[RMDB]
RNA sequence: GGGAACGACUCGAGUAGAGUCGAAAAGAGGUAGUUCGCUACCUCAAAAACCGUAGGAUCGAAGAACUAUUGAGGUCUGAUACCUUCGAAAGAGGGUAUCAUAAGACCAAUGAUGUAGGGAGAUCCUAAACGGAAAAAAGCAACGUUCGCGUUGCAAUCUAACACUAGAGUUCGCUCUAGUGUUAGAAAAAGAAACAACAACAACAAC
Reactivity to DMS in 0.01 (KOAc 150mM, MgCl2 10mM, bicine 150mM(pH8.5), 24C), signal-to-noise 2, nucleotides 027 to 156: g010a060g000g020u010a010g040u000u010c220g080c020u000a030c010c010u000c000a000a060a050a120a090c010c010g000u000a010g000g020a020u000c050g000a160a200g000a080a200c000u000a020u000u020g000a070g050g010u000c000u000g000a030u000a000c000c000u010u000c000g000a140a140a240g000a020g010g000g010u000a000u000c000a050u000a160a100g000a070c000c000a120a090u000g000a100u000g000u000a000g010g000g000a300g000a010u000c000c010u020a010a020a090c030g020g000a010a030a050a070a070a110g010c000a140a030c020g040u000u000c110g000c300g010u000u000g010c000a040a050
Reactivity to 2A3 in 0.01 (KOAc 150mM, MgCl2 10mM, bicine 150mM(pH8.5), 24C), signal-to-noise 4, nucleotides 027 to 156: g010a000g010g000u010a010g010u050u090c210g020c110u000a000c000c000u000c000a030a020a040a000a000c000c010g000u010a020g000g000a000u000c000g040a300a030g020a090a030c010u010a020u010u070g010a040g000g000u000c000u000g000a000u000a000c000c000u020u000c010g060a080a040a040g000a010g000g000g000u010a000u000c000a000u030a050a020g000a000c000c010a010a090u110g020a020u070g000u020a000g000g010g010a040g000a010u000c000c000u020a050a060a000c020g020g060a110a030a020a070a030a000g030c010a000a000c000g070u170u200c300g010c000g140u000u020g000c000a000a040